The record gives the reactivity of an RNA of 177 nucleotides to 2A3 and DMS.
High 2A3 reactivity points to a flexible backbone, as in loops and unpaired stretches.
For 2A3 the reverse transcriptase was SuperScript II with manganese.
DMS adducts were read by reverse transcription with MarathonRT.
The reactions ran in a buffer of 150 mM KOAc, 10 mM MgCl2 and 150 mM bicine (pH 8.5), at 24 C.
Reactivities are given for positions 27 through 126.
[RMDB]
RNA sequence: GGGAACGACUCGAGUAGAGUCGAAAACUAUAUCAAUACAUGGCGUUGGUUUUGGAUCGGUCAUAAUCACAAACCGUCACUUGCUCAAGCGGAACAAUGGUGUUCUUCAUGUAAAGUCUGCACAUGGCUCUAUGACGACAUUCGUGUCGUCAUAGAGAAAAGAAACAACAACAACAAC
Reactivity to 2A3 in 0.01 (KOAc 150mM, MgCl2 10mM, bicine 150mM(pH8.5), 24C), signal-to-noise 3, nucleotides 027 to 126: c030u070a060u050a000u300c070a080a030u080a140c020a030u040g060g000c020g080u030u130g060g060u010u050u050u190g060g000a050u060c050g000g090u080c010a050u120a110a030u050c040a040c030a190a040a010c010c010g030u050c010a000c050u010u100g000c000u020c070a040a040g030c000g050g000a070a020c030a030a110u210g120g000u040g090u070u010c030u030u020c010a020u000g040u070a000a010a060g030u030c060u090g000c050a030c000a090u060g070g000
Reactivity to DMS in 0.01 (KOAc 150mM, MgCl2 10mM, bicine 150mM(pH8.5), 24C), signal-to-noise 2, nucleotides 027 to 126: c040u000a080u030a070u010c060a050a110u020a090c110a020u010g000g010c090g030u020u030g010g010u000u000u000u000g010g000a030u000c110g010g010u000c160a090u020a100a050u010c070a070c060a030a090a060c060c010g000u000c070a110c070u000u000g010c040u000c070a050a080g020c080g020g000a050a030c050a060a090u010g010g030u000g010u010u000c040u000u000c070a010u020g000u010a060a040a070g000u000c080u000g010c090a030c070a020u000g000g010